[RMDB]
RNA sequence: GGGAACGACUCGAGUAGAGUCGAAAAAUUUAAUGGCCAGGACGGUCACCUUUGGGGUGGUGACAAGUGUGAUCACUUGGGUGGUGGCUGUGUUUGCGCUUCUCCCAGGAAUCUCGUUUACCAGAUCGAGUCGAUUAUUAUUCGUAAUAAUCGACUCAAAAGAAACAACAACAACAAC
Reactivity to 2A3 in 0.01 (KOAc 150mM, MgCl2 10mM, bicine 150mM(pH8.5), 24C), signal-to-noise 9, nucleotides 027 to 126: a000u220u250u190a140a090u170g030g000c000c000a010g030g030a010c010g010g000u020c010a010c000c010u100u110u120g100g010g000g000u030g000g020u020g030a030c020a060a120g220u200g020u040g220a030u070c000a000c000u010u020g160g010g030u090g070g010u010g010g000c000u010g010u000g050u050u060u040g040c070g000c000u080u020c030u020c020c000c010a000g040g060a050a050u020c020u010c040g030u020u030u050a200c050c030a050g010a130u150c050
Reactivity to DMS in 0.01 (KOAc 150mM, MgCl2 10mM, bicine 150mM(pH8.5), 24C), signal-to-noise 3, nucleotides 027 to 126: a050u020u040u030a080a090u010g000g010c030c010a030g020g010a030c050g010g000u000c000a010c020c010u010u000u020g000g000g000g040u010g000g000u010g000a020c020a240a150g040u040g010u010g000a080u010c030a020c020u010u010g010g010g020u010g000g000u000g000g000c010u000g010u000g000u020u000u020g020c120g000c030u000u000c090u010c050c010c000a230g010g010a060a030u010c100u010c040g010u000u000u010a120c050c030a130g000a130u050c230

Chemical mapping of a 177-nucleotide RNA with 2A3 and DMS. Values cover nucleotides 27 to 126. It was measured as part of the RMDB library OK1LIB. The 2A3 profile rests on 13,867 reads. Values are in units of 0.01, from 0 to 300, in steps of 10.